[RMDB]
RNA sequence: GGGAACGACUCGAGUAGAGUCGAAAAGAAAGAUUUUGAGCGGGGGUCAAGAGCAAUAACGAAAAAUGUUUGUCAUAAACCGUUUUUCAUUAUUGCUCCUGACCUCCUCUCAUUUGCUAUAUUCAAACAUUCCUACGGAAUUCGUUCCGUAGGAAUGAAAAGAAACAACAACAACAAC
Reactivity to DMS in 0.01 (KOAc 150mM, MgCl2 10mM, bicine 150mM(pH8.5), 24C), signal-to-noise 4, nucleotides 027 to 126: g000a110a150a090g000a100u010u000u000u000g000a000g020c100g000g000g010g000g000u000c000a000a020g000a010g000c000a010a000u000a000a010c080g000a000a010a010a010a010u000g000u000u000u000g010u030c300a110u040a070a020a010c060c070g000u000u000u000u000u000c000a050u010u000a000u000u000g000c000u000c000c030u000g020a010c000c010u000c000c000u000c000u000c010a010u000u000u010g010c070u010a060u030a100u000u000c040a070a130a290
Reactivity to 2A3 in 0.01 (KOAc 150mM, MgCl2 10mM, bicine 150mM(pH8.5), 24C), signal-to-noise 7, nucleotides 027 to 126: g100a010a100a010g080a040u050u040u060u060g010a000g000c010g000g000g000g000g000u000c000a000a010g000a000g000c000a000a000u000a000a000c020g010a000a000a000a000a000u040g050u040u070u040g190u140c120a140u260a140a060a040c030c030g000u000u000u000u000u000c000a010u000u020a000u000u000g000c000u000c000c000u000g000a000c000c000u000c000c000u000c000u000c000a000u010u010u030g000c010u040a040u030a100u260u100c050a070a030a030